Structure probing data (2A3) for a 207-nucleotide construct. Conditions: 150 mM KOAc, 10 mM MgCl2 and 150 mM bicine (pH 8.5), 24 C.
RNA sequence: GGGAACGACUCGAGUAGAGUCGAAAAAGCCGAGGACUACGGUCCUCGGCAACAACCGUCACAACGGCUUCCUGGCGUGACGGGGUUAACCCCAACGGAGCAAGUGCGAGCUUACGAGCUCGCUCAAUUUAGGAGAAUUCCUUCGGGAAUUCUCCAACAUUGGUACCUACUUCGGUAGGUACCAAUGAAAAGAAACAACAACAACAAC
Reactivity to 2A3 in 0.01 (KOAc 150mM, MgCl2 10mM, bicine 150mM(pH8.5), 24C), signal-to-noise 1, nucleotides 027 to 156: a010g010c000c000g000a000g000g000a010c030u070a010c280g070g000u000c000c000u020c020g000g000c010a000a000c040a000a010c000c000g030u000c000a010c000a020a030c040g060g000c020u300u130c030c000u040g000g000c010g000u010g000a000c000g000g010g010g000u120u150a060a050c040c000c000c000a060a000c090g010g030a010g030c030a140a000g020u000g040c000g000a010g010c020u040u040a120c300g100a040g000c000u000c000g000c000u000c000a050a080u080u200u220a070g000g000a000g000a030a000u010u050c020c010u070u120c240g060g010g010a000a000u010u020c010u000c000c000a000a000
It was measured as part of the RMDB library M2RFPK. For 2A3 the reverse transcriptase was SuperScript II with manganese.